[RMDB]
RNA sequence: GGGAACGACUCGAGUAGAGUCGAAAAUACUUCAGGACGAAGUAAACUGUAAAUUUGAGGGGCUUGCCCCUAAUAUUCGUCAAGAAAUGAUUCGUAAAGUGUCAUAUACUUUACCAUAUGCACGAUACCUACAGUCACGUUUCGACGUGACUGUAGGAAAAGAAACAACAACAACAAC
Reactivity to DMS in 0.01 (KOAc 150mM, MgCl2 10mM, bicine 150mM(pH8.5), 24C), signal-to-noise 1, nucleotides 027 to 126: u010a110c160u000u010c030a150g070g000a090c000g030a010a010g000u020a080a060a130c200u010g020u030a020a030a200u000u010u000g010a050g000g000g030g010c020u010u020g040c010c050c000c000u000a010a010u000a100u000u010c000g000u020c030a050a120g020a010a040a140u010g010a090u000u000c150g020u010a010a040a080g010u000g010u010c110a050u000a040u000a040c110u010u010u010a060c130c140a030u030a020u020g000c050a020c030g000a150u000a090
Reactivity to 2A3 in 0.01 (KOAc 150mM, MgCl2 10mM, bicine 150mM(pH8.5), 24C), signal-to-noise 2, nucleotides 027 to 126: u110a010c040u020u040c030a060g220g120a050c030g000a030a000g020u080a070a090a080c110u090g060u270a010a190a220u080u140u190g060a030g040g000g000g020c050u080u130g060c000c010c000c000u020a000a000u000a000u040u040c010g030u030c010a020a000g040a040a190a010u190g070a070u000u100c020g000u030a040a050a040g020u030g090u110c080a000u070a000u000a140c050u070u090u030a030c040c000a040u080a020u060g030c100a030c040g010a020u070a150